[RMDB]
RNA sequence: GGGAACGACUCGAGUAGAGUCGAAAACAAUUCACCAAUUCAAAUAGCUGCAAGUGGCCCAGCUAGUGACUGGCAUCAAAUUGAAUAUGGUUAUACAAAAAUGAUUAUGAGCGCUAAGAAGUCGGUAAUAUUUCCUAGUUUUCGAACUAGGAAAUAUAAAAGAAACAACAACAACAAC
Reactivity to DMS in 0.01 (KOAc 150mM, MgCl2 10mM, bicine 150mM(pH8.5), 24C), signal-to-noise 5, nucleotides 027 to 126: c080a100a170u010u010c100a060c010c010a070a060u000u000c030a030a060a170u000a120g010c100u010g020c040a080a070g020u000g010g010c090c060c030a060g000c050u000a090g010u000g010a070c040u010g000g010c040a090u000c040a040a060a140u000u000g000a030a030u010a090u010g000g000u000u000a100u010a130c120a030a040a070a090a080u010g010a060u000u010a080u000g000a080g010c060g010c060u010a050a070g000a070a080g010u000c060g000g010u010a080
Reactivity to 2A3 in 0.01 (KOAc 150mM, MgCl2 10mM, bicine 150mM(pH8.5), 24C), signal-to-noise 3, nucleotides 027 to 126: c010a010a070u100u140c030a030c060c020a030a040u060u090c020a020a100a120u050a150g020c040u020g020c050a080a080g080u010g160g020c030c010c020a010g000c030u030a050g010u010g130a070c010u010g010g000c010a010u030c030a040a220a100u080u040g020a040a000u160a190u150g030g000u070u070a070u030a110c050a040a120a060a070a070u110g020a010u040u100a060u190g030a020g060c030g000c030u030a070a020g070a100a000g090u080c040g040g030u060a100